An RNA of 177 nucleotides, treated with DMS and 2A3 and read out base by base.
The reactions ran in a buffer of 150 mM KOAc, 10 mM MgCl2 and 150 mM bicine (pH 8.5), at 24 C.
Reactivities are given for positions 27 through 126.
It was measured as part of the RMDB library M2PK50.
RNA sequence: GGGAACGACUCGAGUAGAGUCGAAAAUUGAACGGAUUCGUCCGUUCAACGCGUGCGAUCCAAACGUAGUACAAAAGUACAGACGAAAGCACAAGGAUCAUAUGAUACAGCCGUUCGCGGCUGUAAAUGUCGUUCCAAUAUUCGUAUUGGAACGACAAAAAGAAACAACAACAACAAC
Reactivity to DMS in 0.01 (KOAc 150mM, MgCl2 10mM, bicine 150mM(pH8.5), 24C), signal-to-noise 2, nucleotides 027 to 126: u000u000g000a010a010c000g000g000a000u000u010c180g000u000c000c000g030u000u000c000a000a020c150g000c160g010u000g000c040g000a060u010c000c050a030a100a200c030g000u010a060g000u000a000c020a060a050a100a120g010u010a000c000a080g000a080c080g010a100a070a120g020c010a010c120a160a160g000g010a020u000c020a110u000a050u020g010a240u000a000c000a010g030c000c000g000u000u000c220g000c000g000g000c010u040g010u000a000a030a150
Reactivity to 2A3 in 0.01 (KOAc 150mM, MgCl2 10mM, bicine 150mM(pH8.5), 24C), signal-to-noise 2, nucleotides 027 to 126: u030u000g010a000a000c020g040g010a000u040u050c260g050u040c040c000g000u000u010c010a000a030c050g070c050g000u010g020c060g000a010u020c000c000a100a040a030c040g070u000a030g030u010a010c010a080a300a060a050g050u030a000c000a110g160a030c020g040a170a100a010g070c040a020c020a080a050g030g010a040u040c000a030u040a090u240g070a060u020a070c010a000g000c020c000g020u010u090c300g000c000g080g000c000u000g000u000a010a010a000